[RMDB]
RNA sequence: GGGAACGACUCGAGUAGAGUCGAAAACGGUGAUCCUGCCUCUCCUUGUCGGUGAAUCCUCCCCUGAGAGGCCUCUUCCUAGGUCCGGAGUCUACCUCCAUCUGGUCCGUCCGGGCCCUCUUCGCCGGAGGAGCCCCCUCUCCGUCCUUAUCCUUCUAAUCCAUCAAUAGUUCGCUAUUGAUGGAUUAAAAGAAACAACAACAACAAC
Reactivity to 2A3 in 0.01 (KOAc 150mM, MgCl2 10mM, bicine 150mM(pH8.5), 24C), signal-to-noise 1, nucleotides 027 to 156: c020g000g040u020g020a090u040c000c030u030g060c030c000u000c010u030c020c000u060u000g170u090c090g000g070u070g100a210a270u290c000c030u030c000c050c000c030u040g080a120g010a040g080g000c050c000u050c000u050u000c020c020u060a030g000g010u000c070c050g000g010a020g100u090c090u110a080c020c040u060c070c030a130u030c130u150g010g020u000c020c070g080u050c040c000g040g010g020c010c000c030u090c050u180u080c000g030c040c000g010g010a000g020g000a010g000c000c010c010c040c000u020c030u030c000c020g070u070c000c000u100u120a080u130c000c010u000u040c040u030